The record gives the reactivity of an RNA of 207 nucleotides to 2A3. Values cover nucleotides 27 to 156.
RNA sequence: GGGAACGACUCGAGUAGAGUCGAAAAGAUGUAUUCGUACAUCAAAAAAACCUUUGUGACAAGAGGGGAGCAGCGCUACCCAUUGGGUAGGACUGCUGCAUCGGUGGGAUACCUACCCACCUUGUCACUCUGGUAAAAAGCAAUCUUCGGAUUGCAAGAACCAAGUUUGUUUCGACAAACUUGGUUCAAAAGAAACAACAACAACAAC
Reactivity to 2A3 in 0.01 (KOAc 150mM, MgCl2 10mM, bicine 150mM(pH8.5), 24C), signal-to-noise 2, nucleotides 027 to 156: g000a000u010g000u000a040u000u250c290g030u050a000c000a030u050c000a010a090a090a020a000a000a000c020c000u020u010u030g010u000g000a000c000a010a070g010a090g030g020g060g060a050g030c010a000g000c000g000c060u010a020c010c000c080a200u130u300g000g020g020u010a000g030g110a070c120u300g000c010u000g000c040a050u060c040g010g000u050g000g110g010a050u160a300c010c010u070a080c030c000c000a010c000c010u010u020g000u000c000a000c000u040c000u000g010g020u110a090a120a000a000a000g030c020a020a020u000c020u040u100c270g040g000a000u000u000g000c020a020a080